[RMDB]
RNA sequence: GGGAACGACUCGAGUAGAGUCGAAAAUGACUGCUGCUGCCUCUGCUAUCUGGGACGCCUGGCCACCUGUCUGUACAGUCUCCCUCCAGACCCAUUCUCACGCUGUCUCUUGGCACCCAGGGGCCAGGAGCAUUUGCUAUUUCGAUAGCAAAUGCUCAAAAGAAACAACAACAACAAC
Reactivity to DMS in 0.01 (KOAc 150mM, MgCl2 10mM, bicine 150mM(pH8.5), 24C), signal-to-noise 4, nucleotides 027 to 126: u010g000a100c030u000g000c040u000g020c060u000g010c050c030u010c040u010g020c040u000a080u000c060u010g010g010g010a080c200g010c070c030u000g000g010c020c030a100c030c020u000g010u000c050u000g020u010a120c070a080g000u000c060u000c020c020c010u010c030c040a120g000a150c030c030c030a130u010u000c040u000c040a120c130g000c040u000g000u000c030u000c040u020u010g010g020c050a060c050c050c040a080g010g000g010g010c030c030a040g010
Reactivity to 2A3 in 0.01 (KOAc 150mM, MgCl2 10mM, bicine 150mM(pH8.5), 24C), signal-to-noise 2, nucleotides 027 to 126: u080g040a020c030u040g020c030u020g020c000u000g000c030c000u050c030u050g020c030u050a100u180c030u070g000g020g030a020c040g030c020c020u000g000g010c020c010a120c030c000u010g060u130c040u050g080u070a070c030a060g040u000c040u000c020c000c020u000c010c010a050g040a100c020c010c000a040u120u000c050u010c030a070c050g060c000u070g030u060c010u010c000u070u040g030g020c040a040c020c020c000a030g070g000g010g000c000c000a010g050
The record gives the reactivity of an RNA of 177 nucleotides to DMS and 2A3. For 2A3, 2,676 sequencing reads were counted. Values cover nucleotides 27 to 126.